[RMDB]
RNA sequence: GGGAACGACUCGAGUAGAGUCGAAAACGUAGUAGGGUGGGUUGUUGAUGUGUUCUCGUGUGUGGAACCUUCAGCACGAAAUCGCUGAUGACGAAACCCCUACACCACAAGGCCCACACUCCAGGCAUAGGGGUUCAAUAUUCGUAUUGAACCCCUAAAAAGAAACAACAACAACAAC
Reactivity to DMS in 0.01 (KOAc 150mM, MgCl2 10mM, bicine 150mM(pH8.5), 24C), signal-to-noise 1, nucleotides 027 to 126: c150g000u000a080g030u000a030g000g030g000u000g010g010g020u030u000g010u000u000g000a020u000g000u030g000u000u000c030u000c110g000u000g020u010g030u010g050g000a040a010c090c050u000u000c050a030g000c010a040c060g010a050a180a080u000c050g000c030u000g010a130u010g000a100c070g020a060a120a140c050c020c000c000u000a050c020a050c030c050a080c130a070a060g030g000c060c000c020a080c060a050c040u000c010c050a080g000g000c110a180
The record gives the reactivity of an RNA of 177 nucleotides to DMS. Values cover nucleotides 27 to 126. It was measured as part of the RMDB library OK2TST.